[RMDB]
RNA sequence: GGGAACGACUCGAGUAGAGUCGAAAAUGGCAGAUGGCGUGCCAUAACUCUACUAGUGGGAUACCACGCUUGUGGACCUUAUGCCCACACAGCCAUCCUCUAGUAAGUUUGUAAGACGUCUGAUGACCAUAGAUAUCCAUUUCGAUGGAUAUCUAUGAAAAGAAACAACAACAACAAC
Reactivity to DMS in 0.01 (KOAc 150mM, MgCl2 10mM, bicine 150mM(pH8.5), 24C), signal-to-noise 9, nucleotides 027 to 126: u010g010g010c010a030g000a170u010g000g010c010g010u000g010c050c050a050u010a010a010c010u000c180u000a000c000u000a010g010u030g010g000g000a020u000a090c190c190a130c300g000c020u000u000g010u000g000g010a020c030c250u020u030a120u030g010c040c000c000a000c000a010c200a020g000c010c260a030u000c000c000u000c000u000a010g000u000a010a030g000u000u000u000g000u020a160a150g010a020c020g010u000c000u000g010a230u010g010a130c100
Reactivity to 2A3 in 0.01 (KOAc 150mM, MgCl2 10mM, bicine 150mM(pH8.5), 24C), signal-to-noise 9, nucleotides 027 to 126: u040g040g010c010a010g020a090u080g040g010c010g020u060g160c010c000a040u070a020a010c000u070c070u020a010c000u000a010g020u230g080g020g000a020u070a130c040c110a090c140g010c010u020u030g000u000g010g010a030c010c050u220u190a130u300g030c000c010c000a000c000a010c030a000g000c010c010a010u000c000c000u000c000u000a010g000u010a020a020g000u010u030u050g070u050a050a030g110a030c000g000u000c020u050g070a120u100g040a060c010